[RMDB]
Source: RMDB library OK1LIB, as collected in RNAgym. Chemical mapping of a 177-nucleotide RNA with 2A3. 2A3 adducts were read by reverse transcription with SuperScript II with manganese. Values cover nucleotides 27 to 126. The reactions ran in a buffer of 150 mM KOAc, 10 mM MgCl2 and 150 mM bicine (pH 8.5), at 24 C.
RNA sequence: GGGAACGACUCGAGUAGAGUCGAAAAGCCGAAAUCCUCGACGGAGGUGACGCGUGAUGUUGGAAGCAGCCCGACAAUACUUCCGCGAGCAGCAGUACGUGGCCGAACUCCCGAUCGUCGACAUCGGCCUGGCCGGAGUGUUCGCACUCCGGCCAGGAAAAGAAACAACAACAACAAC
Reactivity to 2A3 in 0.01 (KOAc 150mM, MgCl2 10mM, bicine 150mM(pH8.5), 24C), signal-to-noise 1, nucleotides 027 to 126: g030c000c000g070a000a070a170u240c080c000u020c020g090a090c000g280g000a090g000g020u120g100a060c070g100c070g030u150g060a100u060g040u190u010g110g000a100a000g010c040a000g070c020c000c000g080a040c060a020a070u100a040c020u030u070c000c010g000c000g000a000g010c090a000g120c000a000g000u060a010c100g000u130g020g020c000c060g010a000a000c000u000c060c000c000g000a140u060c060g070u000c060g010a000c050a080u060c000g030g000